Description:
An RNA of 177 nucleotides, treated with 2A3 and DMS and read out base by base. For 2A3 the reverse transcriptase was SuperScript II with manganese. The 2A3 profile rests on 5,434 reads.
[RMDB]
RNA sequence: GGGAACGACUCGAGUAGAGUCGAAAAUCUAGUCUAUUCGUAGACUAGAAAAGACUGCUGCCGCCAGGGUUGACUGCGCCGAGCAGAAACGGCAAAGGAAAAAAACUCUUGCUUUCGAGCAAGAGAAGAUAAAACAUCAAUUCGUUGAUGUUUUAUCAAAAGAAACAACAACAACAAC
Reactivity to 2A3 in 0.01 (KOAc 150mM, MgCl2 10mM, bicine 150mM(pH8.5), 24C), signal-to-noise 3, nucleotides 027 to 126: u000c000u000a000g000u000c010u000a020u040u060c160g080u030a010g000a010c000u000a000g000a000a020a000a010g030a010c040u030g010c010u020g020c100c020g010c050c050a060g100g010g030u150u130g080a070c000u020g000c030g000c030c050g050a040g020c060a060g080a090a080a010c030g000g000c020a030a060a060g110g000a130a080a010a000a010a040a040c010u000c000u000u000g000c000u030u050u140c230g060a000g000c000a000a000g000a000g000a010a000
Reactivity to DMS in 0.01 (KOAc 150mM, MgCl2 10mM, bicine 150mM(pH8.5), 24C), signal-to-noise 6, nucleotides 027 to 126: u000c000u000a010g000u000c000u000a020u000u010c170g020u000a010g000a020c000u000a000g000a020a050a100a190g000a100c020u000g010c060u000g010c030c030g010c080c040a060g000g010g010u000u010g010a220c020u000g010c180g010c070c090g010a130g000c050a040g000a040a060a070c030g000g010c030a040a160a130g000g020a000a010a050a090a070a100a100c000u000c000u000u000g000c000u000u000u010c150g010a010g010c010a010a010g000a000g000a020a030